Description
Chemical mapping of a 177-nucleotide RNA with 2A3 and DMS. For DMS, 1,392 sequencing reads were counted. The RNA was probed in 150 mM KOAc, 10 mM MgCl2 and 150 mM bicine (pH 8.5) at 24 C.
RNA sequence: GGGAACGACUCGAGUAGAGUCGAAAACAGUGUGGUCCCCAUAGGGAGGCUCUCGCUGAGGAGCGACGUGAGAGUCUGCAUAGACCUCGAUAGGCUCAACACGCACAUGGCGGUCCUCGGGCAGACGCGAUGGGUGGUAGUUCGCUACCACCCAUCGAAAAGAAACAACAACAACAAC
Reactivity to 2A3 in 0.01 (KOAc 150mM, MgCl2 10mM, bicine 150mM(pH8.5), 24C), signal-to-noise 2, nucleotides 027 to 126: c030a020g080u030g050u050g250g080u060c070c030c010c010a110u240a180g160g040g000a020g040g010c040u010c030u050c080g010c000u120g020a060g050g080a050g010c000g040a030c030g000u020g030a140g020a000g050u060c000u010g000c010a030u080a160g100a130c010c000u060c080g130a220u050a090g060g000c000u000c060a020a070c040a000c070g060c000a010c000a200u140g080g000c020g000g070u030c020c010u050c010g000g000g000c050a050g050a080c040g000
Reactivity to DMS in 0.01 (KOAc 150mM, MgCl2 10mM, bicine 150mM(pH8.5), 24C), signal-to-noise 2, nucleotides 027 to 126: c090a070g000u000g010u000g000g010u000c010c000c000c090a130u010a100g030g010g000a110g000g030c030u000c010u000c070g030c020u010g000a130g000g000a080g000c000g010a150c140g010u000g020a100g000a040g010u000c010u010g040c190a090u000a080g010a010c070c050u000c130g000a110u020a040g010g000c010u000c020a080a110c090a090c120g000c090a080c080a040u020g020g000c020g000g000u020c010c020u010c080g000g050g030c020a040g000a030c190g010